This 177-nucleotide RNA was probed chemically with 2A3 and DMS. Values cover nucleotides 27 to 126. The RNA was probed in 150 mM KOAc, 10 mM MgCl2 and 150 mM bicine (pH 8.5) at 24 C. For DMS the reverse transcriptase was MarathonRT.

[RMDB]
RNA sequence: GGGAACGACUCGAGUAGAGUCGAAAAGUCCCAUACUUCGGUAUGGGACAAAUAAACUUGACUAAAGCCAGUCAAGAAUCACCACAGGCAAAGUGGUGUAAAAAACUAACUUGUUCGCAAGUUAGAACCAUACUGGUGUGUUCGCACACCAGUAUGGAAAAGAAACAACAACAACAAC
Reactivity to 2A3 in 0.01 (KOAc 150mM, MgCl2 10mM, bicine 150mM(pH8.5), 24C), signal-to-noise 2, nucleotides 027 to 126: g000u010c000c010c000a000u010a000c000u000u070c200g100g000u010a010u040g000g010g000a000c010a000a000a000u050a000a040a010c010u000u010g000a000c010u050a130a000a060g230c060c010a000g020u010c000a000a000g020a030a060u060c020a000c020c010a010c000a060g290g090c090a140a060a000g010u010g000g000u040g010u060a040a100a010a000a000a020c000u020a010a000c000u010u020g000u080u080c190g000c130a000a000g000u000u010a000g000a020a010
Reactivity to DMS in 0.01 (KOAc 150mM, MgCl2 10mM, bicine 150mM(pH8.5), 24C), signal-to-noise 1, nucleotides 027 to 126: g020u020c000c020c000a030u000a000c000u000u000c220g040g000u010a000u000g000g000g000a010c000a000a040a010u000a070a120a090c000u000u000g000a000c020u000a040a050a040g010c020c040a050g000u010c020a010a000g000a300a150u020c040a010c020c010a020c000a080g060g050c300a040a120a100g000u020g000g000u000g000u000a000a060a050a070a040a090c000u000a000a030c000u000u010g000u000u010c150g020c020a000a000g000u000u000a000g000a120a180